[RMDB]
RNA sequence: GGGAACGACUCGAGUAGAGUCGAAAAACAACAGAUAGCUGGAACCAGCGUAGAAUUCUACGCAUAUCCAUAGCGAAUGGUACCUGUAAAGAAAAUAAUGAGUUAUGUACAAGUACCAACAGGGCUCAAUGCCAUGGUGAUGUCAAUCACAUAUGCAAGCACUUUUAAUGUUCGCAUUAAAAGUGCUAAAAGAAACAACAACAACAAC
Reactivity to 2A3 in 0.01 (KOAc 150mM, MgCl2 10mM, bicine 150mM(pH8.5), 24C), signal-to-noise 4, nucleotides 027 to 156: a010c020a010a050c020a030g080a170u090a050g020c030u020g040g030a140a150c080c040a020g000c000g020u010a010g030a170a300u300u130c000u000a010c000g000c000a010u030a030u040c030c000a020u060a050g020c000g050a100a030u070g020g010u020a010c010c010u000g010u060a020a110a010g090a050a130a030a040u210a030a080u150g040a060g160u140u130a060u110g020u020a010c000a020a030g010u000a030c020c000a010a040c060a040g060g020g000c010u060c090a090a110u190g030c010c010a020u100g090g010u010g010a020u010g110u170c060a010a050u000c000a010c000a050u170a030u130g060c050a020
Reactivity to DMS in 0.01 (KOAc 150mM, MgCl2 10mM, bicine 150mM(pH8.5), 24C), signal-to-noise 2, nucleotides 027 to 156: a060c060a080a010c060a150g010a110u000a080g040c090u000g000g000a050a050c200c080a180g030c010g000u020a010g030a240a210u010u000c010u000a020c020g020c020a130u000a090u020c020c010a170u010a110g020c040g000a160a180u000g010g030u000a020c020c010u010g010u000a050a120a060g020a110a100a090a130u020a120a070u000g020a130g040u000u030a050u000g000u010a000c010a010a010g040u000a010c000c000a030a070c120a040g010g010g000c080u000c130a050a160u000g010c020c000a040u000g030g000u000g020a040u000g010u010c200a040a100u000c050a010c060a100u010a070u010g010c020a130